[RMDB]
RNA sequence: GGGAACGACUCGAGUAGAGUCGAAAAACUCGUCCCCACCCUCGACGCCUACGCGCUCUCCUACCGGGGCGAGGAGUAUCCAGUACUACCGGUGAUCGAUGGUAGGAAACAGCGGUACUACACUGCCUGCGUUUACCGAAUUCGUUCGGUAAACGCAAAAAGAAACAACAACAACAAC
Reactivity to 2A3 in 0.01 (KOAc 150mM, MgCl2 10mM, bicine 150mM(pH8.5), 24C), signal-to-noise 1, nucleotides 027 to 126: a010c020u010c000g100u140c050c010c010c000a070c000c000c000u040c020g060a020c010g040c000c040u170a030c070g050c010g030c070u020c000u000c020c020u080a070c000c010g000g000g010g010c000g030a040g010g000a020g010u080a050u000c040c030a030g030u030a030c020u030a040c000c020g160g030u190g060a100u070c080g020a000u030g010g010u000a000g010g000a060a010a000c050a010g000c030g120g040u030a050c020u050a030c030a030c030u080g020c020c020
Reactivity to DMS in 0.01 (KOAc 150mM, MgCl2 10mM, bicine 150mM(pH8.5), 24C), signal-to-noise 1, nucleotides 027 to 126: a130c010u000c010g050u000c000c000c010c060a240c070c020c010u000c080g020a090c070g010c030c060u000a100c060g020c030g000c060u000c100u010c040c070u000a040c140c110g020g020g000g020c020g000a060g010g010a050g000u000a040u010c020c010a150g010u010a060c040u000a050c010c010g000g000u030g000a130u010c160g030a150u020g030g010u010a040g010g000a050a080a050c120a040g030c040g000g000u000a040c060u000a120c150a100c060u000g020c110c030
An RNA of 177 nucleotides, treated with 2A3 and DMS and read out base by base.
Conditions: 150 mM KOAc, 10 mM MgCl2 and 150 mM bicine (pH 8.5), 24 C.
For DMS, 955 sequencing reads were counted.
Source: RMDB library OK2TRN, as collected in RNAgym.